[RMDB]
RNA sequence: GGGAACGACUCGAGUAGAGUCGAAAAGAUAUGGACGAGUCGCAGGGAAGGUGGGUCGGAAACGACCCACAGCAGCACUCCCUGACCCGACGAUGAGUCCUAAGUCAAACACGGCUUCGGCCGUGAACCAUCAUAUUUUGUUCGCAAAAUAUGAUGGAAAAGAAACAACAACAACAAC
Reactivity to DMS in 0.01 (KOAc 150mM, MgCl2 10mM, bicine 150mM(pH8.5), 24C), signal-to-noise 8, nucleotides 027 to 126: g010a040u000a240u010g000g000a030c000g010a300g010u000c000g020c040a040g000g010g010a040a090g020g000u000g010g000g020u000c010g010g000a050a040a100c010g010a010c000c000c000a000c010a030g000c070a050g010c140a300c050u000c000c010c000u000g000a080c080c120c040g000a180c020g010a040u010g000a300g010u010c000c000u000a020a080g000u000c020a120a110a180c010a010c000g010g010c000u000u010c180g020g010c000c000g010u000g000a050a160
Reactivity to 2A3 in 0.01 (KOAc 150mM, MgCl2 10mM, bicine 150mM(pH8.5), 24C), signal-to-noise 4, nucleotides 027 to 126: g000a000u060a030u080g020g000a000c020g030a050g040u000c010g010c060a010g030g000g020a070a050g160g010u000g000g010g000u000c000g020g000a040a050a020c000g010a000c000c020c000a000c000a000g000c000a000g000c010a030c030u030c010c000c000u040g040a150c040c030c020g010a030c020g100a140u260g110a020g000u000c000c000u030a080a010g030u020c020a000a140a040c010a010c000g000g010c000u080u100c290g150g000c000c010g000u000g000a000a010

This 177-nucleotide RNA was probed chemically with DMS and 2A3. The RNA was probed in 150 mM KOAc, 10 mM MgCl2 and 150 mM bicine (pH 8.5) at 24 C. As a SHAPE reagent, 2A3 marks flexible, mostly unpaired nucleotides at the ribose 2'-OH. For DMS the reverse transcriptase was MarathonRT. 2A3 adducts were read by reverse transcription with SuperScript II with manganese.